[RMDB]
RNA sequence: GGGAACGACUCGAGUAGAGUCGAAAAGGGUAGAAUACCGGUGAUUGACUGGAGGGCAAGUCUGGUGCCAGCAGCCGCGGUAAUUCCAGCUCCAGGAGUGUCAUAGUGCAUUGCUGCAUUUAAAAGGACUUAUCGGGUGCUUCGGCACCCGAUAAGUAAAAGAAACAACAACAACAAC
Reactivity to DMS in 0.01 (KOAc 150mM, MgCl2 10mM, bicine 150mM(pH8.5), 24C), signal-to-noise 1, nucleotides 027 to 126: g000g080g000u010a020g000a050a070u000a090c190c040g000g000u020g000a130u030u000g000a110c000u000g020g000a090g000g020g000c070a230a210g000u000c020u070g000g020u000g000c000c020a020g000c020a100g000c020c050g020c080g000g010u000a020a110u000u040c020c050a060g040c040u000c040c090a010g000g000a020g000u000g000u010c030a180u050a050g010u000g000c020a000u000u040g010c090u000g030c090a050u010u000u010a070a080a110a220g000g000
Reactivity to 2A3 in 0.01 (KOAc 150mM, MgCl2 10mM, bicine 150mM(pH8.5), 24C), signal-to-noise 2, nucleotides 027 to 126: g040g000g070u160a030g070a150a140u100a120c030c050g030g000u040g020a220u120u190g030a060c080u080g010g000a030g000g080g000c090a160a020g030u030c030u050g000g110u050g030c070c060a100g050c000a000g090c100c020g000c010g000g000u000a050a040u070u000c000c000a030g010c000u000c010c000a020g070g050a070g000u080g010u000c100a150u120a130g120u100g000c000a030u000u020g030c070u110g000c030a050u080u100u030a000a270a100a000g060g040
About this RNA
The record gives the reactivity of an RNA of 177 nucleotides to DMS and 2A3. The RNA was probed in 150 mM KOAc, 10 mM MgCl2 and 150 mM bicine (pH 8.5) at 24 C. For DMS the reverse transcriptase was MarathonRT. Values cover nucleotides 27 to 126. Source: RMDB library RFM100, as collected in RNAgym.